[RMDB]
RNA sequence: GGGAACGACUCGAGUAGAGUCGAAAAUCUAUAUUCGUAUAGACAAGUGCGUACUACAAGAGUGGACCUUUGAUCUAUCGCUACCCACCCACUCCCAAAUAGGAGUGGAGGCGAUAGGGAGGUCGCUUGUAUCGCGAGGUUUCCGAUUCGUCGGAAAGUGCGCAUGUUUUUUCGAAAACAUGCGCACAAAAGAAACAACAACAACAAC
Reactivity to 2A3 in 0.01 (KOAc 150mM, MgCl2 10mM, bicine 150mM(pH8.5), 24C), signal-to-noise 1, nucleotides 027 to 156: u060c000u000a030u000a060u020u170c160g110u020a070u000a000g060a100c120a170a050g220u130g010c010g070u140a110c060u020a020c010a000a000g020a150g130u290g060g120a040c040c000u200u300u070g040a020u010c000u000a000u000c000g000c010u060a180c030c100c080a000c000c000c010a000c040u000c000c020c000a280a300a200u300a130g000g000a000g000u000g000g000a000g010g000c000g020a010u000a000g010g000g000a020g020g000u020c020g000c000u000u010g040u030a110u300c020g020c000g010a020g060g000u050u050u010c000c000g000a030u070u120c090g060u030c020g040g000a050a000a020